[RMDB]
RNA sequence: GGGAACGACUCGAGUAGAGUCGAAAAGAUAUGGAUCGUGGCUUUUGACGAUCGCCCAGUCGGAAACGACUGUAACGAUCGAUAAGCCAAUCCUAAGUCAAAAGCGCAGCCCUUCGGGGCUGCGCAACAAUAGCAUGAUGUUCGCAUCAUGCUAUUGAAAAGAAACAACAACAACAAC
Reactivity to DMS in 0.01 (KOAc 150mM, MgCl2 10mM, bicine 150mM(pH8.5), 24C), signal-to-noise 4, nucleotides 027 to 126: g000a050u010a300u000g010g000a010u000c100g010u000g000g050c000u000u010u010u000g020a250c120g010a000u000c010g020c160c240c010a030g000u000c000g000g000a090a110a240c000g000a030c000u000g000u010a070a120c010g000a000u010c000g020a100u000a010a020g010c000c010a050a020u000c010c000u010a080a170g010u010c020a060a070a110a110g020c000g020c000a010g030c010c000c000u000u000c190g020g050g030g030c010u010g000c030g020c010a000a030
Reactivity to 2A3 in 0.01 (KOAc 150mM, MgCl2 10mM, bicine 150mM(pH8.5), 24C), signal-to-noise 4, nucleotides 027 to 126: g020a020u070a040u180g020g000a020u070c220g280u210g000g000c040u110u080u120u290g280a160c050g000a000u010c000g000c020c020c000a000g020u000c010g000g040a060a070a070c010g010a000c010u000g010u030a160a050c020g000a000u010c000g030a050u010a070a010g000c010c000a000a000u000c000c000u020a160a020g040u020c030a000a030a170a110g000c010g000c000a000g000c000c010c000u020u090c270g030g040g040g070c010u010g010c020g000c010a000a010